[RMDB]
RNA sequence: GGGAACGACUCGAGUAGAGUCGAAAAACGACCACUACGGCUUACGAGCCGUCGUGGUCGACGGUAGCUGGAUAAAACCGGGCCAUUGGCCAAACCCAGCCCAUCAACUGCAGCACCUGUCCCGCAAGUGAGGAACCUUGCUUCGGCAAGGUUCCAAUCACAAUGAUGAGUUCGCUCAUCAUUGUGAAAAAGAAACAACAACAACAAC
Reactivity to 2A3 in 0.01 (KOAc 150mM, MgCl2 10mM, bicine 150mM(pH8.5), 24C), signal-to-noise 1, nucleotides 027 to 156: a000c020g000a010c000c000a000c000u010a000c010g000g000c010u040u040a080c230g060a020g010c010c000g050u000c010g010u010g000g000u000c020g010a000c010g000g050u050a080g000c010u050g030g010a140u090a140a140a020a030c020c000g010g000g010c040c050a300u140u210g020g020c060c010a130a010a010c000c000c000a000g020c030c010c000a030u130c030a050a090c040u070g070c010a030g000c010a010c010c000u040g030u020c000c020c010g000c030a070a100g080u080g080a040g020g000a000a000c000c000u000u000g010c000u060u110c170g040g000c000a000a000g000g000u000u020c000c000a000a000